[RMDB]
RNA sequence: GGGAACGACUCGAGUAGAGUCGAAAACGUGAGUGGUUACCUGAUUGGCGGAGGCAAUAACUACGCCGCAAAAGUGAAUGACCAGGAAAUCAGCCGUGGGCAAUUCGAGAACGCCUUCAACAGCGAGAUUCUCCACAUCAUUCGUGAUGUGGAGAAUAAAAGAAACAACAACAACAAC
Reactivity to 2A3 in 0.01 (KOAc 150mM, MgCl2 10mM, bicine 150mM(pH8.5), 24C), signal-to-noise 2, nucleotides 027 to 126: c040g030u050g080a140g020u080g000g040u020u030a120c030c000u040g070a160u100u200g030g000c000g010g000a030g000g010c050a060a120u120a110a010c030u070a040c050g000c010c050g030c040a110a170a020a050g130u220g070a120a120u080g040a030c000c040a020g050g050a020a060a110u080c030a030g030c020c040g020u080g000g000g000c050a020a110u110u040c040g000a000g010a140a020c050g020c000c000u090u070c020a060a070c010a040g070c000g050a040g010
Reactivity to DMS in 0.01 (KOAc 150mM, MgCl2 10mM, bicine 150mM(pH8.5), 24C), signal-to-noise 4, nucleotides 027 to 126: c090g020u020g020a100g030u000g000g010u000u010a050c050c000u000g010a150u010u020g030g000c010g010g000a030g010g000c090a090a050u010a100a080c040u000a070c030g010c000c010g000c210a040a050a080a100g020u000g020a080a060u010g010a080c060c020a090g000g010a090a090a050u010c090a080g020c040c030g010u000g020g000g010c040a080a060u000u010c090g000a090g000a130a110c090g000c040c010u000u000c120a040a080c140a120g020c100g010a110g010